An RNA of 177 nucleotides, treated with DMS and 2A3 and read out base by base. The RNA was probed in 150 mM KOAc, 10 mM MgCl2 and 150 mM bicine (pH 8.5) at 24 C. For DMS the reverse transcriptase was MarathonRT.

RNA sequence: GGGAACGACUCGAGUAGAGUCGAAAACUUGUGAACAAGAUCUAGGGUCCAGGCCUUUGCACCUAUCUGCAGAGGAUGGUAUGGAGAGAGGGGCUUAAACUGGGACAAGGUGGAUAUAGGCCAAAGGAUUCCCGAUAGAUUUCGAUCUAUCGGGAAUAAAAGAAACAACAACAACAAC
Reactivity to DMS in 0.01 (KOAc 150mM, MgCl2 10mM, bicine 150mM(pH8.5), 24C), signal-to-noise 3, nucleotides 027 to 126: c030u000u000g020u000g010a090a120c080a060a080g000a090u000c040u000a100g000g010g010u000c020c020a050g000g010c010c000u000u010u000g020c030a060c090c110u000a090u020c160u000g000c020a020g010a040g010g000a150u000g000g010u010a050u000g010g000a090g010a060g000a110g030g000g010g020c110u000u000a010a070a110c080u000g020g000g020a130c060a040a070g020g040u010g000g000a060u010a050u010a050g000g020c040c130a060a080a100g000g010
Reactivity to 2A3 in 0.01 (KOAc 150mM, MgCl2 10mM, bicine 150mM(pH8.5), 24C), signal-to-noise 1, nucleotides 027 to 126: c020u080u080g030u020g100a180a060c010a060a010g010a000u060c040u110a010g030g020g040u000c000c030a050g080g290c040c030u020u010u020g000c010a010c010c000u190a100u220c070u080g040c030a020g000a000g070g010a020u030g010g030u130a080u120g050g010a020g020a020g000a030g020g020g010g020c000u030u090a050a170a080c060u050g030g000g070a020c000a060a010g000g010u000g010g000a050u010a030u040a090g000g050c060c000a050a030a000g100g010

About this RNA:
For DMS, 2,859 sequencing reads were counted. The data come from the RNA Mapping Database (RMDB), library OK2TRN.